[RMDB]
RNA sequence: GGGAACGACUCGAGUAGAGUCGAAAAUUGCAAGCCUUCGGGCUUGCAAGGUGUCCGAAUGCGGAAUAUAUAAUCCUCCGCUUAAGGAUUAUACCGACUUAAGUGCCAGGCUGUUCGCAGCCUGGAAUAAAUUUUAAGCAUUCGUGCUUAAAAUUUAAAAAGAAACAACAACAACAAC
Reactivity to 2A3 in 0.01 (KOAc 150mM, MgCl2 10mM, bicine 150mM(pH8.5), 24C), signal-to-noise 1, nucleotides 027 to 126: u010u020g000c000a020a010g000c000c020u080u050c220g050g000g000c000u040u050g040c000a010a030g000g020u020g010u000c010c000g010a060a110u160g000c000g000g070a120a020u160a010u070a020u060a300a100u130c000c070u030c020c020g000c000u000u030a040a000g020g010a000u000u050a010u020a050c010c000g080a100c060u200u130a190a080g100u040g210c000c000a000g020g000c010u010g020u060u100c210g000c100a000g010c000c000u000g000g000a000a000
Reactivity to DMS in 0.01 (KOAc 150mM, MgCl2 10mM, bicine 150mM(pH8.5), 24C), signal-to-noise 3, nucleotides 027 to 126: u000u000g010c010a000a010g020c000c010u000u010c210g030g020g030c010u000u000g000c000a000a010g000g000u010g010u000c000c000g000a120a110u010g000c040g000g010a080a050u000a110u020a110u010a140a140u010c200c090u000c030c040g000c030u000u010a120a200g000g000a000u000u010a090u010a130c000c020g010a120c240u010u010a070a080g010u010g000c000c000a000g000g020c000u000g010u010u010c140g030c000a010g010c000c010u000g000g000a020a020